The record gives the reactivity of an RNA of 207 nucleotides to 2A3 and DMS. Conditions: 150 mM KOAc, 10 mM MgCl2 and 150 mM bicine (pH 8.5), 24 C. The data come from the RNA Mapping Database (RMDB), library M2RFPK. Values cover nucleotides 27 to 156. The 2A3 profile rests on 1,807 reads. For 2A3 the reverse transcriptase was SuperScript II with manganese.

[RMDB]
RNA sequence: GGGAACGACUCGAGUAGAGUCGAAAAGUAUAAAAUCUGCAAGUAGUGCUAUUGUUUGAAUCACCGUACCUAUUUAGGUUUACGCUCCAAGAUCGGUGGAUAGCAGCCCUAUCAAUAUCUAGGAGAAAAAACCCAGGACUGUUCGCAGUCCUGGGAACUUGUAAGACAGGUUCGCCUGUCUUACAAGAAAAGAAACAACAACAACAAC
Reactivity to 2A3 in 0.01 (KOAc 150mM, MgCl2 10mM, bicine 150mM(pH8.5), 24C), signal-to-noise 3, nucleotides 027 to 156: g010u010a050u060a270a120a020a100u090c050u110g080c070a050a040g050u120a030g070u090g030c010u030a050u060u100g160u090u120u200g170a100a080u160c020a000c000c000g020u030a010c000c000u080a130u230u120u240a020g000g000u010u040u030a010c000g010c010u020c000c010a010a010g010a020u020c000g030g020u020g040g030a010u020a010g000c030a010g020c010c000c010u060a080u100c040a070a090u020a020u170c030u000a000g000g000a000g000a060a050a000a010a020a000c010c000c010a000g010g010a000c000u010g010u070u090c180g020c120a000g000u000c000c000u000g000g000g000a000a000
Reactivity to DMS in 0.01 (KOAc 150mM, MgCl2 10mM, bicine 150mM(pH8.5), 24C), signal-to-noise 1, nucleotides 027 to 156: g040u000a230u000a110a110a090a090u000c020u010g030c100a100a100g030u000a100g000u010g010c000u000a050u000u000g000u000u040u000g010a180a150u020c010a050c020c040g000u000a050c000c030u000a220u000u000u000a050g050g020u000u020u000a040c040g030c010u000c020c010a050a110g040a060u010c150g000g060u010g010g030a080u000a070g000c010a160g000c080c100c010u010a070u000c040a080a120u000a100u000c050u000a080g010g000a140g030a000a070a070a010a080a220c000c020c000a060g020g000a030c000u000g000u000u000c300g030c000a010g050u000c000c000u000g000g030g030a000a000